[RMDB]
RNA sequence: GGGAACGACUCGAGUAGAGUCGAAAAGUCUCACGAGUGCAUAGACAAAGGUAGUUGACUCCGGUGCUACCAGUACUCGAAGGAAUGCGAAAGAGUUCAUGUAUUCCAACCGGAGAAGAACUCAAAAAUUAGGAUAUACGUUCGCGUAUAUCCUAAUAAAAGAAACAACAACAACAAC
Reactivity to 2A3 in 0.01 (KOAc 150mM, MgCl2 10mM, bicine 150mM(pH8.5), 24C), signal-to-noise 9, nucleotides 027 to 126: g050u000c000u010c010a030c010g000a000g000u010g020c020a100u160a170g130a150c090a060a130a030g000g000u000a000g010u010u050g060a110c000u000c000c000g000g000u010g000c000u000a000c000c010a000g000u010a000c000u000c010g000a020a010g070g060a060a030u120g050c070g060a070a140a170g060a070g020u040u050c030a050u170g040u120a100u110u110c050c010a020a010c000c000g000g000a000g000a020a020g010a010a010c040u020c050a020a080a030a000
Reactivity to DMS in 0.01 (KOAc 150mM, MgCl2 10mM, bicine 150mM(pH8.5), 24C), signal-to-noise 6, nucleotides 027 to 126: g010u000c010u000c020a250c000g000a010g010u000g010c010a150u040a120g020a140c300a090a200a080g000g000u000a010g010u000u000g000a120c000u000c010c010g000g020u010g010c000u010a010c000c000a090g010u010a010c000u000c000g000a150a090g000g010a060a030u020g010c040g000a080a120a090g020a050g000u010u010c040a160u020g030u020a040u020u010c050c060a100a010c000c000g010g000a010g010a110a100g010a040a030c060u010c020a040a070a070a100
This 177-nucleotide RNA was probed chemically with 2A3 and DMS.
It was measured as part of the RMDB library OK1LIB.
Conditions: 150 mM KOAc, 10 mM MgCl2 and 150 mM bicine (pH 8.5), 24 C.
Reactivities are given for positions 27 through 126.
For DMS, 18,957 sequencing reads were counted.